About this RNA
The data come from the RNA Mapping Database (RMDB), library ARCHII. This 207-nucleotide RNA was probed chemically with 2A3 and DMS. As a SHAPE reagent, 2A3 marks flexible, mostly unpaired nucleotides at the ribose 2'-OH. For DMS the reverse transcriptase was MarathonRT.

RNA sequence: GGGAACGACUCGAGUAGAGUCGAAAAGCUCGCCCAGCCUGUUCCUGCACCGUGACUUCCCGUGAACUGCAGUCGUCUCCCCCCUGUGGGGAAGGCGAGCCACCCAGGGACGUGUCUCGGUUCAUCCAACCAAUCGAUCCUUGCGGGCGUUCGUGGCGUUCUAGUAAAGGUUCGCCUUUACUAGAACAAAAGAAACAACAACAACAAC
Reactivity to 2A3 in 0.01 (KOAc 150mM, MgCl2 10mM, bicine 150mM(pH8.5), 24C), signal-to-noise 2, nucleotides 027 to 156: g000c000u010c030g040c010c010c020a020g000c000c020u080g020u040u000c000c000u030g010c040a020c030c030g040u050g020a040c040u020u040c000c040c030g060u060g040a050a080c060u090g000c050a080g130u020c000g020u000c010u000c000c020c000c020c010c040u070g100u300g080g020g000g000a010a010g010g020c000g010a000g000c000c010a090c020c010c000a040g050g000g000a000c050g150u110g030u000c030u050c090g040g000u010u020c040a080u020c070c060a040a030c000c000a070a100u080c060g050a090u040c030c000u040u060g020c080g000g050g000c020g030u010u040c070g070u040g030g000c040
Reactivity to DMS in 0.01 (KOAc 150mM, MgCl2 10mM, bicine 150mM(pH8.5), 24C), signal-to-noise 1, nucleotides 027 to 156: g010c040u000c040g070c030c020c020a140g000c000c000u010g030u000u000c000c020u000g030c150a180c090c020g000u000g020a090c070u000u010c000c030c040g010u020g020a040a090c080u000g040c050a150g040u000c020g000u000c000u010c000c000c020c000c000c100u010g020u000g040g050g030g010a000a040g060g000c010g020a000g010c100c080a080c020c040c020a140g010g000g020a040c190g010u000g010u000c010u010c060g060g030u000u000c050a130u000c070c030a090a120c000c030a120a120u000c040g010a060u000c030c000u000u010g040c030g010g010g010c040g030u030u010c040g010u000g020g040c200